The record gives the reactivity of an RNA of 207 nucleotides to 2A3 and DMS.
Source: RMDB library OK3TST, as collected in RNAgym.
Conditions: 150 mM KOAc, 10 mM MgCl2 and 150 mM bicine (pH 8.5), 24 C.
The 2A3 profile rests on 3,805 reads.
For 2A3 the reverse transcriptase was SuperScript II with manganese.
[RMDB]
RNA sequence: GGGAACGACUCGAGUAGAGUCGAAAAACGAAGCCCACUGACUCCAAAAAAAUAGCUUGGAUGGGAUCAGGUUUUGAGACGCAGCCUGAGGCUGACGGUAGUCCCUGCGUCCACCCCACAUGGCCACAGCUUCCCUGCAGAUCAGGGAGCACAUCAACCGUAAUAAAUAGUUCGCUAUUUAUUACGGAAAAGAAACAACAACAACAAC
Reactivity to 2A3 in 0.01 (KOAc 150mM, MgCl2 10mM, bicine 150mM(pH8.5), 24C), signal-to-noise 5, nucleotides 027 to 156: a020c030g030a090a020g040c000c010c010a040c060u050g040a050c030u030c040c050a050a020a010a020a000a020a300u090a110g040c060u030u050g050g020a070u050g050g020g040a050u060c050a060g060g040u040u040u100u130g120a130g010a020c000g000c000a010g030c030c090u150g040a160g100g000c010u040g030a100c080g160g000u040a030g050u040c020c000c020u010g000c010g000u000c010c000a030c000c010c010c000a050c020a070u090g080g000c050c050a070c040a080g020c000u180u150c000c000c000u010g040c090a060g010a210u140c000a010g030g000g000a000g050c010a020c010a060u120c030a010a070
Reactivity to DMS in 0.01 (KOAc 150mM, MgCl2 10mM, bicine 150mM(pH8.5), 24C), signal-to-noise 1, nucleotides 027 to 156: a100c000g010a080a130g010c010c000c030a100c050u000g020a060c030u000c010c010a010a000a060a220a050a150a240u000a080g010c160u000u000g030g010a300u030g000g000g030a050u000c070a030g000g000u000u000u010u010g000a130g020a050c030g000c080a120g000c040c020u000g010a070g040g030c030u010g030a070c030g050g060u000a080g000u000c010c000c010u010g010c020g000u000c000c060a100c000c000c020c040a040c150a040u010g000g010c010c030a090c070a060g000c020u000u000c000c010c000u000g050c070a150g000a120u020c030a060g000g000g000a050g040c040a080c070a100u000c080a050a200